[RMDB]
RNA sequence: GGGAACGACUCGAGUAGAGUCGAAAACCCUUAGCAUUCGUGCUAAGGGAAAUAACGGUCGCCUCAUGCAGCUAGUCGAAAAUGCUGCUCGACCUUUUGGUAAAAUCUGGCCGUUCGCGGCCAGAAACUUUUAUUCCUGGUUCGCCAGGAAUAAAAGAAAAGAAACAACAACAACAAC
Reactivity to 2A3 in 0.01 (KOAc 150mM, MgCl2 10mM, bicine 150mM(pH8.5), 24C), signal-to-noise 2, nucleotides 027 to 126: c010c000c020u000u000a010g010c010a020u040u030c160g120u040g000c010u030a000a000g000g000g040a030a160a010u100a080a020c040g000g020u000c000g060c050c060u110c050a050u170g000c010a000g010c010u080a050g200u240c080g140a030a040a020a130u120g010c000u000g000c000u030c010g020a000c000c000u000u060u060u080g070g000u060a030a040a010a140u000c000u000g000g000c010c000g000u010u030c250g000c020g060g020c010c000a000g010a000a000a000
Reactivity to DMS in 0.01 (KOAc 150mM, MgCl2 10mM, bicine 150mM(pH8.5), 24C), signal-to-noise 3, nucleotides 027 to 126: c020c000c000u010u000a000g010c000a050u010u020c220g030u010g030c000u000a030a020g010g000g010a010a030a040u010a070a050c170g000g000u000c010g040c300c130u000c180a070u010g000c030a020g000c010u000a220g010u000c170g000a070a090a080a110u000g000c010u010g010c020u000c030g000a020c000c010u000u010u000u000g010g010u010a080a100a110a080u000c010u000g010g000c000c000g030u000u010c230g030c020g010g010c000c000a000g000a020a040a050